Source information
Structure probing data (2A3) for a 177-nucleotide construct. The 2A3 profile rests on 648 reads. Conditions: 150 mM KOAc, 10 mM MgCl2 and 150 mM bicine (pH 8.5), 24 C.

RNA sequence: GGGAACGACUCGAGUAGAGUCGAAAAACUGUGGAGGCUCUUGUGGCCAAAUGCAGAGCGCUGAAUGCGGAGGGCAUAACAGCGUACCAUUGGGCCGGGUCUUACCGAGUACCACCCGCCACCGUGCGGCACCAAUCGGUUUCGACCGAUUGGUGCCAAAAGAAACAACAACAACAAC
Reactivity to 2A3 in 0.01 (KOAc 150mM, MgCl2 10mM, bicine 150mM(pH8.5), 24C), signal-to-noise 1, nucleotides 027 to 126: a000c040u010g070u290g040g010a020g010g000c020u060c060u220u250g250u300g100g000c030c030a010a010a010u030g000c000a000g110a100g110c040g010c010u000g000a040a000u020g000c100g110g190a280g130g300g020c040a060u080a300a010c010a060g000c020g000u050a120c030c000a040u030u060g000g060g000c010c000g070g000g000u000c030u080u000a090c020c000g000a010g020u030a070c030c030a050c000c020c000g070c000c020a100c040c060g100u180g060c000